The record gives the reactivity of an RNA of 207 nucleotides to 2A3 and DMS.
DMS (dimethyl sulfate) methylates the pairing face of unpaired adenines and cytosines.
For 2A3, 5,841 sequencing reads were counted.
Conditions: 150 mM KOAc, 10 mM MgCl2 and 150 mM bicine (pH 8.5), 24 C.

RNA sequence: GGGAACGACUCGAGUAGAGUCGAAAAUGGCCAGGCUGGGCUCGAGUUCCUGGCCUCAAGUGAUCCACCCGCUUGGCCUCUCAACUGCAGCCGGCUAACUUAUGUUCAUUUUAGUGGUAAAAGUUAUGAUGUGUUCCAUCCCAACCUAAGAUGUCCAGGUUAGUUACAAUUUCGAUUGUAACUAACCAAAAGAAACAACAACAACAAC
Reactivity to 2A3 in 0.01 (KOAc 150mM, MgCl2 10mM, bicine 150mM(pH8.5), 24C), signal-to-noise 6, nucleotides 027 to 156: u120g010g010c010c000a020g010g020c040u110g010g030g020c050u060c090g030a040g040u050u050c010c000u020g050g030c030c010u030c010a050a040g020u040g060a060u040c030c010a030c010c000c010g000c010u020u030g020g000c010c000u000c010u010c020a070a100c040u080g050c020a040g020c020c020g060g010c030u020a070a020c010u100u110a050u250g050u070u080c030a080u030u060u040u050a050g010u060g050g010u060a070a060a080a060g040u060u100a090u160g060a030u030g060u000g030u160u020c010c020a040u030c020c010c000a030a060c020c010u020a050a030g020a070u040g050u030c030c020a000
Reactivity to DMS in 0.01 (KOAc 150mM, MgCl2 10mM, bicine 150mM(pH8.5), 24C), signal-to-noise 2, nucleotides 027 to 156: u000g000g040c020c020a060g010g050c010u010g030g020g020c040u010c060g010a080g060u000u000c040c030u010g000g020c040c020u000c070a030a100g030u000g010a180u000c080c060a090c010c040c030g020c030u000u000g000g000c010c010u000c050u000c030a050a030c060u010g000c050a120g010c040c020g010g010c030u000a060a060c030u000u000a070u000g000u010u010c060a080u000u020u000u010a050g050u000g030g010u010a020a060a050a090g010u000u000a060u000g010a060u000g020u000g010u000u010c030c000a100u020c010c040c020a060a070c040c030u000a060a090g010a070u010g000u000c040c040a300